[RMDB]
RNA sequence: GGGAACGACUCGAGUAGAGUCGAAAAAUGGAUUCUAUGUGUUUCAAACGUCUUUGUAUACAUUGUACGAAUCGGUAUUGAUAACUGGGCACCGUUAUAUGUGUCAGAGCAUUUACACUUUAGUAAACGGUAGCGAAAAAUUCGUUUUUCGCUACCGAAAAGAAACAACAACAACAAC
Reactivity to 2A3 in 0.01 (KOAc 150mM, MgCl2 10mM, bicine 150mM(pH8.5), 24C), signal-to-noise 3, nucleotides 027 to 126: a010u170g040g010a010u060u000c050u100a090u070g060u000g010u020u080u070c090a100a100a040c050g110u050c050u000u000u000g080u040a020u000a000c060a020u040u150g070u060a030c040g010a050a060u050c000g000g050u050a080u090u220g160a160u060a220a050c040u060g000g100g060c070a040c040c000g030u020u020a070u020a000u090g000u000g000u000c040a010g000a000g020c000a010u050u050u040a010c020a050c010u210u210u140a120g000u090a090a060a000
Reactivity to DMS in 0.01 (KOAc 150mM, MgCl2 10mM, bicine 150mM(pH8.5), 24C), signal-to-noise 1, nucleotides 027 to 126: a100u030g020g000a070u000u000c020u000a050u010g000u010g000u000u000u010c010a010a100a060c180g000u020c000u000u010u000g000u030a000u000a000c010a000u010u000g070u020a020c000g010a050a010u000c060g000g000u040a170u000u050g000a030u050a060a000c030u010g020g000g010c110a050c100c090g000u000u000a070u050a050u000g020u000g030u000c000a030g000a040g030c050a070u000u000u020a000c000a110c110u000u010u040a090g000u000a050a030a080